RNA sequence: GGGAACGACUCGAGUAGAGUCGAAAACGGGUAAGGGUCCUAUAAUAAGUGGGAUACGCUAAAUUUUUCCGUCUGUAAAGUUUAGAAGAGAUUAUCAGACUAGCGAUGCAUGAUGCCUGUUAGGCGGCUAAUGUUCAGCGAAACCUUAAUAGCAUGACUAUUUGACAUUCUUCGGAAUGUCAAAUAGAAAAGAAACAACAACAACAAC
Reactivity to 2A3 in 0.01 (KOAc 150mM, MgCl2 10mM, bicine 150mM(pH8.5), 24C), signal-to-noise 4, nucleotides 027 to 156: c030g000g020g060u110a030a050g060g010g020u020c010c010u020a050u050a200a120u160a130a020g060u080g010g020g020a010u020a040c010g000c010u010a010a010a060u090u050u010u030u030c020c000g010u000c000u010g020u010a010a020a040g010u010u010u040a020g000a060a020g020a010g010a040u100u100a040u180c000a000g010a000c000u010a010g000c010g010a010u080g010c000a010u020g020a030u220g020c000c010u040g050u070u070a050g020g070c000g000g000c000u020a040a010u020g020u060u030c070a020g010c000g000a010a010a020c010c010u070u150a030a010u020a040g010c020a020u050g010a030
Reactivity to DMS in 0.01 (KOAc 150mM, MgCl2 10mM, bicine 150mM(pH8.5), 24C), signal-to-noise 1, nucleotides 027 to 156: c090g020g010g040u010a050a120g010g000g000u000c040c040u000a050u010a110a120u000a080a140g060u010g020g010g020a170u010a150c030g000c000u000a000a050a050u000u000u000u000u000c000c030g000u000c040u040g010u000a070a050a060g000u030u010u000a040g000a060a090g010a160g000a100u010u020a080u000c030a060g020a020c020u010a240g010c050g000a140u010g010c040a050u000g000a210u010g000c000c020u040g050u010u000a050g040g040c030g020g000c050u010a050a040u000g000u010u000c030a140g040c010g000a180a080a090c030c050u000u000a000a000u010a090g010c030a010u000g010a230